The data come from the RNA Mapping Database (RMDB), library OK2TRN. The record gives the reactivity of an RNA of 177 nucleotides to 2A3 and DMS. For 2A3, 1,526 sequencing reads were counted. The RNA was probed in 150 mM KOAc, 10 mM MgCl2 and 150 mM bicine (pH 8.5) at 24 C. DMS adducts were read by reverse transcription with MarathonRT. Values are in units of 0.01, from 0 to 300, in steps of 10. Reactivities are given for positions 27 through 126.
RNA sequence: GGGAACGACUCGAGUAGAGUCGAAAAGGUCGGUGAGUUGCAAAAGCAGCUUGGGAUACCCGGCUCUACACUCAGUCACCAUAUUUCAGCACUGGUAUCGGUAGGGCUGGUCAAACAAAACCGUGAGCUAAGCCACGAUAUUCGUAUCGUGGCUUAGAAAAGAAACAACAACAACAAC
Reactivity to 2A3 in 0.01 (KOAc 150mM, MgCl2 10mM, bicine 150mM(pH8.5), 24C), signal-to-noise 2, nucleotides 027 to 126: g070g010u070c000g050g170u100g010a020g030u010u010g000c030a080a240a300a220g030c000a000g000c000u040u030g000g020g020a020u020a080c000c030c000g000g020c000u000c000u000a010c050a010c010u050c020a030g000u040c000a020c030c030a090u100a140u170u300u150c070a030g040c040a010c060u040g000g060u140a110u170c040g070g010u030a030g010g020g010c020u010g070g010u050c150a040a110a110c040a040a100a040a020c020c010g020u050g020a050g060
Reactivity to DMS in 0.01 (KOAc 150mM, MgCl2 10mM, bicine 150mM(pH8.5), 24C), signal-to-noise 2, nucleotides 027 to 126: g010g030u020c000g000g000u000g030a020g020u010u010g000c020a100a120a170a180g000c000a010g000c020u000u000g000g000g000a070u000a040c160c030c000g010g010c000u000c000u020a010c010a140c170u000c080a010g030u000c060a160c060c040a080u010a120u000u010u000c070a070g020c130a050c030u020g010g000u000a050u010c100g010g040u010a020g020g000g020c040u000g000g010u010c110a030a050a080c180a050a040a050a050c050c010g010u000g000a150g010